[RMDB]
RNA sequence: GGGAACGACUCGAGUAGAGUCGAAAAUGUCACGGUCCGGCGUUGAUGGGUUAUCACUCGUAAUCUUCUGCUUGCAGGAGGCCCGUUCUUCAGGCAUCUGUCUGUUGAACAACCCCGCGUUCCUCACAAUCUAUCGACGGUUCGCCGUCGAUAGAUUAAAAGAAACAACAACAACAAC
Reactivity to 2A3 in 0.01 (KOAc 150mM, MgCl2 10mM, bicine 150mM(pH8.5), 24C), signal-to-noise 2, nucleotides 027 to 126: u140g000u030c000a000c040g000g020u040c030c020g020g000c020g080u050u070g060a080u100g010g000g050u050u070a110u110c040a010c050u050c050g050u090a000a120u040c010u100u010c010u030g030c050u000u150g000c030a060g000g080a070g040g020c020c000c030g010u010u030c010u010u010c000a010g000g030c020a190u080c200u110g040u010c010u010g020u000u020g000a000a020c000a020a030c020c000c000c000g010c020g000u040u000c020c000u000c010a080c030
Reactivity to DMS in 0.01 (KOAc 150mM, MgCl2 10mM, bicine 150mM(pH8.5), 24C), signal-to-noise 1, nucleotides 027 to 126: u020g000u010c000a050c180g010g010u030c090c020g000g000c010g000u000u010g000a030u000g000g000g010u020u000a100u020c090a100c060u000c070g010u000a060a070u010c030u000u000c010u000g000c060u030u000g000c060a010g000g000a000g020g010c010c010c090g000u000u000c000u010u000c020a080g000g000c000a090u010c230u020g020u000c000u000g010u000u000g000a000a010c020a120a150c040c010c010c050g030c010g020u000u000c040c000u020c140a110c200

Structure probing data (2A3 and DMS) for a 177-nucleotide construct. For 2A3, 974 sequencing reads were counted.